[RMDB]
RNA sequence: GGGAACGACUCGAGUAGAGUCGAAAAAGCAGAGCCAAAGGAAAUUUUUAAAAUUGUUAAAUAUAUAAAGGAAGAACCAUUCCUGAUUACUUUACUUUUUCGAUUCUUGUCAGUUAUCUUAGUAAAACACCAGUAAUGUAUUCGUACAUUACUGGUGAAAAGAAACAACAACAACAAC
Reactivity to 2A3 in 0.01 (KOAc 150mM, MgCl2 10mM, bicine 150mM(pH8.5), 24C), signal-to-noise 1, nucleotides 027 to 126: a020g000c030a010g030a000g000c020c060a030a000a050g060g070a020a060a140u060u020u040u130u170a300a270a230a240u170u010g000u000u110a130a220a110u250a020u150a060u260a300a070a100g090g000a040a110g040a040a050c040c000a050u010u010c000c000u010g000a060u100u050a010c010u000u030u010a010c010u000u010u010u010u010c000g020a000u000u000c000u000u100g160u030c000a010g000u000u010a020u020c000u000u150a060g100u100a100a050a060a000